[RMDB]
RNA sequence: GGGAACGACUCGAGUAGAGUCGAAAAUUGAAACUUACAUUUGUCUUAUCUGAGUUCCUUCCUCAGGAAACUGACCCUCAGGCCUGGCAGAUGUUAUUAGGAACUGAAACUUACCAGAUCACCACAUCAGGGCAAUGAGACACCAGACCCCUCACGCGAGAAUCCUAUCUUUCGAGAUAGGAUUCUCAAAAGAAACAACAACAACAAC
Reactivity to 2A3 in 0.01 (KOAc 150mM, MgCl2 10mM, bicine 150mM(pH8.5), 24C), signal-to-noise 1, nucleotides 027 to 156: u020u060g020a070a020a000c010u040u090a000c090a020u060u070u000g000u000c000u040u160a200u140c010u040g020a030g030u090u030c030c000u090u170c000c060u100c060a040g000g050a040a040a070c110u050g070a100c030c000c000u000c050a020g010g140c010c040u030g080g000c020a010g000a010u040g020u090u080a130u170u130a040g010g030a060a000c050u050g080a110a050a120c060u100u100a040c070c010a000g000a230u070c050a050c110c000a020c010a130u130c110a070g040g000g000c000a010a070u020g010a050g030a080c010a040c100c000a030g030a110c050c010c020c020u030c000a020c080g090c000
Structure probing data (2A3) for a 207-nucleotide construct. For 2A3 the reverse transcriptase was SuperScript II with manganese.